Structure probing data (2A3 and DMS) for a 177-nucleotide construct.
[RMDB]
RNA sequence: GGGAACGACUCGAGUAGAGUCGAAAAAAAAGAGUUUGAACACCUUACAGCCCAUGCUGUUCAAGACAAGUAUACCGAAACUAUGCAAUGUGGGGUAAUAAGGAUUUCAGAUCCCAGUCCACAUUUGCGACGAACAACAGUUCGCUGUUGUUCGUCGAAAAGAAACAACAACAACAAC
Reactivity to 2A3 in 0.01 (KOAc 150mM, MgCl2 10mM, bicine 150mM(pH8.5), 24C), signal-to-noise 1, nucleotides 027 to 126: a000a000a000a000g200a060g000u100u040u030g020a000a000c000a030c040c040u010u030a080c080a070g080c000c000c000a080u060g000c040u000g050u040u010c010a000a060g080a120c030a120a000g120u070a130u010a270c010c060g060a060a070a050c050u050a120u290g010c030a100a010u020g000u030g000g030g070g080u060a010a090u150a120a030g000g040a040u100u160u030c080a060g020a200u020c000c030c040a030g090u010c050c000a090c000a030u090u080u090g000
Reactivity to DMS in 0.01 (KOAc 150mM, MgCl2 10mM, bicine 150mM(pH8.5), 24C), signal-to-noise 1, nucleotides 027 to 126: a050a000a100a150g000a070g000u000u000u030g000a030a000c100a070c030c040u000u000a050c150a140g000c050c010c030a080u030g000c130u000g020u020u000c000a070a030g060a130c090a020a030g000u000a110u000a110c100c050g000a030a070a010c160u010a090u000g020c040a030a000u020g020u000g010g000g000g000u020a030a050u060a100a150g000g020a050u000u000u000c170a140g070a020u000c000c000c060a200g000u000c050c020a000c060a020u000u000u010g020
For 2A3, 762 sequencing reads were counted. It was measured as part of the RMDB library OK2TRN. The reactions ran in a buffer of 150 mM KOAc, 10 mM MgCl2 and 150 mM bicine (pH 8.5), at 24 C.